[RMDB]
RNA sequence: GGGAACGACUCGAGUAGAGUCGAAAACUGGCUGCUUAAUUGACGGCCACGUCGAACCGGUUCACGCCUGAUAGACCGGUGAGACGUAACUUCAUCAGGCUGGCAUCUGACGGCGCUCGCCGCGAAGGGUGCGAGAAAAACAGGUGAGCUGGUCGAAGAAUGUGACUUACUUCGGUAAGUCACAUUCAAAAGAAACAACAACAACAAC
Reactivity to 2A3 in 0.01 (KOAc 150mM, MgCl2 10mM, bicine 150mM(pH8.5), 24C), signal-to-noise 4, nucleotides 027 to 156: c050u020g000g020c000u010g000c020u080u140a140a130u300u140g070a190c020g010g000c000c000a010c020g000u000c000g000a000a010c010c000g000g010u070u060c010a000c050g010c010c000u010g000a010u010a010g020a000c000c000g010g000u000g000a010g000a000c000g000u020a030a030c060u240u200c050a030u000c000a000g000g000c000u000g050g000c000a010u000c030u040g000a030c020g030g020c080g000c070u010c010g030c020c000g020c010g010a020a030g020g000g010u010g000c020g010a010g000a050a110a000a010a000c070a020g020g000u000g010a000g000c020u060g070g100u080c080g020a070a030
Reactivity to DMS in 0.01 (KOAc 150mM, MgCl2 10mM, bicine 150mM(pH8.5), 24C), signal-to-noise 1, nucleotides 027 to 156: c050u000g020g060c040u000g020c000u010u000a070a280u010u000g020a270c000g010g040c020c030a120c010g000u000c010g000a300a050c000c000g020g090u020u050c030a040c000g000c010c000u000g030a110u010a300g000a040c030c000g000g020u000g000a300g010a050c080g000u020a040a040c220u000u000c070a030u000c000a100g030g000c010u040g060g040c030a020u000c020u040g030a160c030g010g000c080g000c050u000c040g000c000c020g000c000g000a100a220g010g010g030u000g030c020g000a080g000a010a020a060a110a120c140a110g040g050u000g000a130g010c030u020g040g020u000c010g000a170a300
About this RNA:
Structure probing data (2A3 and DMS) for a 207-nucleotide construct. It was measured as part of the RMDB library RSTRND. The RNA was probed in 150 mM KOAc, 10 mM MgCl2 and 150 mM bicine (pH 8.5) at 24 C.